Structure probing data (DMS and 2A3) for a 177-nucleotide construct. The 2A3 profile rests on 2,219 reads. The RNA was probed in 150 mM KOAc, 10 mM MgCl2 and 150 mM bicine (pH 8.5) at 24 C. Values cover nucleotides 27 to 126.
RNA sequence: GGGAACGACUCGAGUAGAGUCGAAAACAGCGCAGGCCGCCGUGAGGCAGCUUAGGCCGGCAGCCGUGGCUGCCAGUGUCGCCGCGAGUCACACAGCCAGCAGGACCAGCACUGCCUCGAGCCGCCGAGGCUUACUCUUGUUCGCAAGAGUAAGCCUAAAAGAAACAACAACAACAAC
Reactivity to DMS in 0.01 (KOAc 150mM, MgCl2 10mM, bicine 150mM(pH8.5), 24C), signal-to-noise 2, nucleotides 027 to 126: c050a130g000c070g010c060a130g000g010c020c160g050c040c050g040u000g020a090g020g020c010a020g020c260u010u010a120g030g010c020c060g000g030c020a140g010c010c070g030u010g020g020c010u000g000c030c090a030g020u000g030u000c080g000c080c020g000c060g040a130g000u000c050a050c050a140c090a050g010c020c030a120g000c020a100g000g000a100c030c030a080g010c070a150c040u020g000c010c030u000c030g010a060g000c020c100g030c020c020g010
Reactivity to 2A3 in 0.01 (KOAc 150mM, MgCl2 10mM, bicine 150mM(pH8.5), 24C), signal-to-noise 2, nucleotides 027 to 126: c020a010g010c030g020c090a130g030g000c000c010g050c000c040g110u070g030a030g040g020c010a010g020c030u080u100a100g010g040c000c030g070g040c060a040g020c020c020g090u050g100g000c000u040g030c050c030a100g000u050g020u130c070g040c130c020g120c080g030a060g020u020c010a010c020a010c010a040g020c020c010a020g000c010a070g010g050a080c010c010a000g000c000a020c040u010g000c000c000u020c020g010a010g030c000c020g000c000c010g000